The record gives the reactivity of an RNA of 177 nucleotides to DMS and 2A3. 2A3 adducts were read by reverse transcription with SuperScript II with manganese. Values cover nucleotides 27 to 126. Source: RMDB library TTRDEL, as collected in RNAgym.
RNA sequence: GGGAACGACUCGAGUAGAGUCGAAAAGAUAUGGAGUACUACCCACCAUCGAAGCAGCGUUGAAAUCGGAAACGAUGGAGCUGUGGAGAUGAGGUACUCCUAAGUCAAACUUCGCUUCGGCGAAGAAGUAUAACCAAGUCUUCGGACUUGGUUAUACAAAAGAAACAACAACAACAAC
Reactivity to DMS in 0.01 (KOAc 150mM, MgCl2 10mM, bicine 150mM(pH8.5), 24C), signal-to-noise 4, nucleotides 027 to 126: g020a060u030a250u000g010g000a030g030u010a020c010u000a100c040c020c030a300c160c000a010u000c000g000a300a170g000c010a010g020c000g000u000u020g000a080a120a030u000c000g000g000a100a080a190c000g010a020u000g020g010a080g010c000u000g010u000g030g000a300g000a000u000g010a050g010g000u000a000c000u000c000c000u000a020a070g010u010c150a080a080a140c000u000u000c000g010c000u000u020c140g030g000c000g000a010a000g000a030a080
Reactivity to 2A3 in 0.01 (KOAc 150mM, MgCl2 10mM, bicine 150mM(pH8.5), 24C), signal-to-noise 2, nucleotides 027 to 126: g070a050u230a130u300g000g000a010g000u000a000c000u100a150c010c020c000a010c000c010a010u000c000g000a000a000g000c010a010g000c010g280u300u080g020a040a050a000u000c010g000g010a050a030a090c010g000a010u010g030g030a010g000c010u020g030u030g000g020a050g000a010u000g000a010g000g000u000a000c010u020c000c000u010a070a000g040u060c140a070a080a170c010u000u010c010g010c000u040u070c140g170g000c010g000a000a000g000a000a010